The data come from the RNA Mapping Database (RMDB), library OK2TRN.
Structure probing data (DMS) for a 177-nucleotide construct.
DMS adducts were read by reverse transcription with MarathonRT.

RNA sequence: GGGAACGACUCGAGUAGAGUCGAAAAGGGCACAGGGACCCCUGGCGGUCAUCGGAUGGUAUCUUGCUUCCGGUCUGAUCAUCAAAUUCGUCUCCCCGCCUUUCGGCCGGUUGACCGCCCGAGAGCAUGGUGUGAGUCUAUUCGUAGACUCACACCAAAAAGAAACAACAACAACAAC
Reactivity to DMS in 0.01 (KOAc 150mM, MgCl2 10mM, bicine 150mM(pH8.5), 24C), signal-to-noise 2, nucleotides 027 to 126: g000g010g030c080a070c130a110g020g000g000a180c070c020c030c050u000g010g020c050g010g020u000c020a010u000c030g020g000a060u000g020g010u010a090u000c120u000u000g000c020u000u000c020c020g010g020u000c130u000g010a040u000c030a050u000c070a020a040a150u020u010c100g000u020c040u000c010c030c080c100g000c070c010u000u000u000c040g020g030c060c000g000g010u020u000g000a030c020c000g000c170c010c030g000a070g000a060g000c190a120